[RMDB]
RNA sequence: GGGAACGACUCGAGUAGAGUCGAAAACAAGCGCGGCAGGUGCUCCGGAUGUUUUUAGCUGGGUCGCAAGCUGUAUGCGCACAUGCGAUGCGCGUCUCCUGUGCGGACAGACUCUGGCAACCUGGCCUCUACGCAUGGGGUUCGCUCCGUGUGUAGAAAAAGAAACAACAACAACAAC
Reactivity to 2A3 in 0.01 (KOAc 150mM, MgCl2 10mM, bicine 150mM(pH8.5), 24C), signal-to-noise 9, nucleotides 027 to 126: c040a020a030g050c040g000c020g060g000c020a020g020g010u020g010c020u010c010c010g010g020a050u050g040u030u030u010u020u060a020g000c000u010g000g010g050u010c000g000c000a000a010g000c010u010g040u050a040u050g100c010g020c000a000c000a020u110g040c050g090a070u030g030c040g010c030g040u030c010u010c010c010u080g030u030g080c000g010g020a000c000a010g030a050c010u020c020u050g060g000c000a010a020c000c000u010g050g010c000c000
Reactivity to DMS in 0.01 (KOAc 150mM, MgCl2 10mM, bicine 150mM(pH8.5), 24C), signal-to-noise 9, nucleotides 027 to 126: c070a110a080g000c100g010c080g000g010c020a030g000g010u010g010c150u010c020c010g010g000a050u020g000u010u020u020u010u010a100g010c000u000g000g000g010u000c020g000c010a080a020g000c110u000g000u040a020u010g000c010g010c000a010c030a120u040g010c200g000a090u000g010c050g010c040g010u010c000u010c110c020u000g020u010g010c010g000g010a020c010a010g000a080c020u000c040u000g000g000c300a070a030c010c010u000g000g000c010c090

An RNA of 177 nucleotides, treated with 2A3 and DMS and read out base by base. For DMS, 58,250 sequencing reads were counted. DMS adducts were read by reverse transcription with MarathonRT. Conditions: 150 mM KOAc, 10 mM MgCl2 and 150 mM bicine (pH 8.5), 24 C. The data come from the RNA Mapping Database (RMDB), library OK1LIB. 2A3 adducts were read by reverse transcription with SuperScript II with manganese.